[RMDB]
RNA sequence: GGGAACGACUCGAGUAGAGUCGAAAAUUUUGGUUUAAUUGUGCUGAAGGAACUCCGGCACAGGCAAAAAGGAUGACAUUCACCCAGGCAGAAGGAGUGACCACAACAAUUUCAUUUUAACUAUUAGCACUCGUAGCUGAUUCGUCAGCUACGAGUGAAAAGAAACAACAACAACAAC
Reactivity to 2A3 in 0.01 (KOAc 150mM, MgCl2 10mM, bicine 150mM(pH8.5), 24C), signal-to-noise 2, nucleotides 027 to 126: u050u060u000u040g060g080u070u040u160a060a110u120u060g010u000g010c010u030g010a190a140g010g000a120a040c050u000c060c000g020g010c010a030c030a050g050g000c040a020a020a070a080a000g120g040a070u100g040a030c020a040u040u050c010a040c000c000c000a020g100g000c040a020g030a080a000g010g010a020g020u070g020a060c040c010a020c000a130a070c020a120a090u080u090u090c070a130u050u040u070u080a080a120c030u070a050u180u060a100g040
Reactivity to DMS in 0.01 (KOAc 150mM, MgCl2 10mM, bicine 150mM(pH8.5), 24C), signal-to-noise 2, nucleotides 027 to 126: u010u020u040u010g000g000u000u000u000a060a150u000u000g100u010g000c030u000g020a090a080g000g020a240a060c060u000c020c150g000g000c070a050c090a030g000g000c160a000a010a040a110a010g050g000a040u000g000a050c300a240u000u000c060a120c000c010c040a070g000g000c030a200g000a060a040g000g000a060g000u000g000a180c060c000a060c180a010a020c130a040a060u060u020u090c080a120u050u020u010u010a030a120c220u040a150u030u030a070g000
Chemical mapping of a 177-nucleotide RNA with 2A3 and DMS.
For 2A3 the reverse transcriptase was SuperScript II with manganese.
For 2A3, 2,056 sequencing reads were counted.
Conditions: 150 mM KOAc, 10 mM MgCl2 and 150 mM bicine (pH 8.5), 24 C.
DMS adducts were read by reverse transcription with MarathonRT.